[RMDB]
RNA sequence: GGGAACGACUCGAGUAGAGUCGAAAAUUUGAUUGCGUUGAUCUUUCAGUAGCUUCUACCUAUUUUUUAGUCCGCAUCUUGCAAGAUAAGACUGGCGACUUUAUGUCUACAAUUAUUACUUCCUGCCCUAUCGGCAUCUUCGGAUGCCGAAAAAGAAACAACAACAACAAC
Reactivity to DMS in 0.01 (KOAc 150mM, MgCl2 10mM, bicine 150mM(pH8.5), 24C), signal-to-noise 1, nucleotides 027 to 129: u090u000u050g020a000u000u020g040c270g060u020u040g000a120u040c050u040u000u000c030a040g030u000a090g020c090u000u000c090u010a120c110c030u000a010u000u030u090u110u000u000a130g060u030c020c050g000c050a100u020c040u020u080g090c010a000a070g020a000u040a020a020g030a100c120u000g040g020c130g020a050c050u000u000u000a130u000g010u010c030u040a110c090a010a010u080u020a090u010u040a070c120u010u030c020c050u000g060c040c000c040u000a160
Reactivity to 2A3 in 0.01 (KOAc 150mM, MgCl2 10mM, bicine 150mM(pH8.5), 24C), signal-to-noise 3, nucleotides 027 to 129: u190u050u150g050a080u000u100g000c030g040u000u100g020a090u010c000u010u050u040c060a030g000u030a010g000c000u060u020c000u060a060c030c000u020a200u010u130u040u020u040u040a010g030u000c010c070g000c040a010u020c030u000u060g000c060a040a050g010a120u110a000a050g050a060c040u130g060g000c000g010a020c000u050u060u060a120u130g030u060c010u000a000c020a110a000u060u020a060u060u090a120c030u060u070c000c030u050g010c000c000c000u050a100